[RMDB]
RNA sequence: GGGAACGACUCGAGUAGAGUCGAAAACGAAAUUUGAAGAGAAAUUCCUCGCUGUGCCGUCUGAAGCGCUGGUUUACACCAUGAAAGGUGACCAGAAGUACUUCCCGGUGUACGCGAACGACGGCAACCUUUGCGCGUAGUUCGCUACGCGCAAAGGAAAAGAAACAACAACAACAAC
Reactivity to 2A3 in 0.01 (KOAc 150mM, MgCl2 10mM, bicine 150mM(pH8.5), 24C), signal-to-noise 2, nucleotides 027 to 126: c000g050a040a040a080u290u270u270g130a180a040g070a020g090a130a100a090u100u050c030c000u040c040g000c030u070g070u070g110c030c010g000u010c030u040g050a050a010g030c010g000c030u000g000g060u000u020u150a010c010a000c020c000a030u130g210a200a170a030g000g000u010g010a000c000c010a010g010a090a010g010u000a050c020u040u040c000c000c000g020g000u000g000u020a000c050g000c000g000a020a000c020g000a000c020g040g000c000a040a000
Reactivity to DMS in 0.01 (KOAc 150mM, MgCl2 10mM, bicine 150mM(pH8.5), 24C), signal-to-noise 2, nucleotides 027 to 126: c100g000a130a080a100u010u030u010g020a130a090g030a080g010a050a180a130u000u010c000c030u000c070g060c190u010g050u010g010c010c000g010u000c010u000g000a300a190g050c010g010c000u000g000g010u000u000u010a190c010a000c010c000a070u000g000a060a100a220g010g010u000g030a080c010c010a000g000a140a140g010u000a030c060u010u000c020c030c020g000g020u000g010u020a110c060g020c030g010a060a300c270g030a020c000g040g050c050a030a040
Conditions: 150 mM KOAc, 10 mM MgCl2 and 150 mM bicine (pH 8.5), 24 C. This 177-nucleotide RNA was probed chemically with 2A3 and DMS. The data come from the RNA Mapping Database (RMDB), library OK2TST. The 2A3 profile rests on 1,358 reads.